[RMDB]
RNA sequence: GGGAACGACUCGAGUAGAGUCGAAAAGGAUGUCCCGACCGGAGGCCGACAAUCCAGGGAACCGGAUGUUAUCACGUUGUUGCAGUACCAGAUGGCAUCUUAAAUCCGAUCUGCAAAUAAGCAUGUAAAAACCGGCAUACGUUCGCGUAUGCCGGAAGAUAAGUAUGAACUUCGGUUCAUACUUAUCAAAAGAAACAACAACAACAAC
Reactivity to 2A3 in 0.01 (KOAc 150mM, MgCl2 10mM, bicine 150mM(pH8.5), 24C), signal-to-noise 4, nucleotides 027 to 156: g100g000a070u070g040u040c000c010c010g010a070c020c050g050g030a030g040g080c050c060g030a080c060a070a070u040c020c060a080g000g030g000a040a040c020c030g040g010a030u030g030u060u080a050u070c060a060c220g040u050u070g070u030u050g040c060a060g020u100a080c020c010a040g000a060u000g010g010c010a010u030c000u060u140a110a180a050u030c020c010g050a110u050c030u050g000c020a040a040a130u150a100a100g080c080a060u110g070u300a040a120a020a050a060c000c010g000g000c010a000u010a000c010g000u020u050c230g000c010g110u000a000u000g000c010c010g000g000a000a000
Reactivity to DMS in 0.01 (KOAc 150mM, MgCl2 10mM, bicine 150mM(pH8.5), 24C), signal-to-noise 2, nucleotides 027 to 156: g010g000a070u010g020u000c020c010c020g010a080c050c020g010g030a070g010g030c040c010g040a100c020a080a130u000c010c010a070g000g030g010a120a120c040c070g000g000a090u000g000u000u020a100u000c040a180c210g010u000u000g010u000u000g020c020a080g010u000a040c060c050a070g020a070u000g010g000c020a060u000c030u000u010a060a080a120u010c000c030g010a070u000c030u000g020c030a030a060a110u010a080a130g010c060a110u000g010u000a050a050a050a120a140c010c000g000g000c000a000u000a010c000g030u000u000c300g010c020g030u010a010u000g040c000c010g030g010a010a010